[RMDB]
RNA sequence: GGGAACGACUCGAGUAGAGUCGAAAACCGGAGACGUUCUGGACGCGGGUUCGAUUCCCGCCACCUCCACAGUGGGCAUUCUCAAGAGUGUUCAGUGUGGGGGUGCACCGGUUUCGACAGGGCGGGCGUUCAGGUCGUAGUUCGCUACGACCUGAACAAAAGAAACAACAACAACAAC
Reactivity to 2A3 in 0.01 (KOAc 150mM, MgCl2 10mM, bicine 150mM(pH8.5), 24C), signal-to-noise 2, nucleotides 027 to 126: c000c000g000g000a030g020a020c030g030u050u020c040u030g080g020a060c070g060c050g010g000g000u020u020c010g000a010u040u030c000c000c010g010c020c000a000c000c000u000c000c020a010c010a030g130u000g000g010g010c010a000u000u000c070u080c110a170a150g010a000g000u020g020u000u000c040a080g060u010g000u000g000g000g000g000g000u000g000c000a010c000c000g050g020u010u040u070c030g010a030c010a060g040g040g090c100g000g020g040c050
Reactivity to DMS in 0.01 (KOAc 150mM, MgCl2 10mM, bicine 150mM(pH8.5), 24C), signal-to-noise 1, nucleotides 027 to 126: c000c010g080g000a070g040a100c020g010u000u010c070u000g000g030a100c090g000c000g000g010g000u000u000c080g010a300u050u010c040c000c090g000c180c030a000c000c000u000c000c000a050c000a020g000u000g000g000g000c030a000u000u000c000u000c210a210a210g000a050g010u000g000u000u000c020a070g000u000g090u030g000g000g000g000g000u000g000c080a070c170c110g000g020u010u000u000c000g000a120c300a180g000g000g020c120g030g000g000c080